[RMDB]
RNA sequence: GGGAACGACUCGAGUAGAGUCGAAAAACAUAAGAUAUGGAGCCACCUUCGCGACGAUCUAUGUAACAAGUACAUCGGAAACGAUGUACCGCCCAUAGGGAGCGAAGUGGCUCCUAAGUCCGAACAACGCCUGUAUUAAGUUCGCUUAAUACAGGCGAAAAGAAACAACAACAACAAC
Reactivity to DMS in 0.01 (KOAc 150mM, MgCl2 10mM, bicine 150mM(pH8.5), 24C), signal-to-noise 3, nucleotides 027 to 126: a160c070a130u000a090a060g010a010u000a300u030g010g000a010g000c000c010a020c250c100u000u000c000g000c000g000a100c200g000a010u030c010u000a010u000g020u010a050a060c210a100a080g020u010a000c010a000u000c000g000g000a040a060a090c000g040a000u000g020u000a000c000c080g000c300c270c000a010u000a020g000g000g000a030g040c010g010a030a030g050u000g000g000c000u000c000c010u000a000a070g000u010c000c040g000a170a080c200a150a200